RNA sequence: GGGAACGACUCGAGUAGAGUCGAAAAGAUCCUUAUGUAGAAGACUCUGUUGCUUAAUGAGAAUGAAUCCUAAUUCGACACUAGGUGGUAACCCCUCGCUAUUAUUCGGAAUAGGACACUCUCUAUCGAUAAUCGUUUACUUCGGUAAACGAUUAUCAAAAGAAACAACAACAACAAC
Reactivity to DMS in 0.01 (KOAc 150mM, MgCl2 10mM, bicine 150mM(pH8.5), 24C), signal-to-noise 2, nucleotides 027 to 126: g000a130u010c020c000u020u000a120u010g000u000a080g020a040a090g000a070c100u010c160u000g000u000u020g000c040u000u000a080a120u000g010a030g010a020a030u000g010a130a170u000c000c000u000a030a050u000u000c000g000a010c300a140c300u000a020g000g000u020g000g000u000a150a100c250c190c000c010u000c060g000c000u000a000u000u010a180u000u010c010g000g000a010a080u000a020g000g000a030c070a000c030u000c010u000c000u000a110u000c060
Reactivity to 2A3 in 0.01 (KOAc 150mM, MgCl2 10mM, bicine 150mM(pH8.5), 24C), signal-to-noise 2, nucleotides 027 to 126: g040a030u050c010c010u090u040a160u180g110u090a130g100a260a000g030a010c010u060c090u150g030u160u080g020c030u080u130a130a030u140g010a000g000a040a040u040g020a030a040u020c000c000u010a030a050u030u010c000g030a010c010a020c030u010a010g060g030u000g010g050u080a070a110c100c090c000c020u000c040g210c040u000a040u230u000a070u110u060c000g060g000a030a020u040a010g020g000a000c000a000c010u020c000u000c030u020a050u130c040
Overview
Structure probing data (DMS and 2A3) for a 177-nucleotide construct. Source: RMDB library RFMREP, as collected in RNAgym. DMS (dimethyl sulfate) methylates the pairing face of unpaired adenines and cytosines. 2A3 adducts were read by reverse transcription with SuperScript II with manganese. DMS adducts were read by reverse transcription with MarathonRT. For 2A3, 1,113 sequencing reads were counted.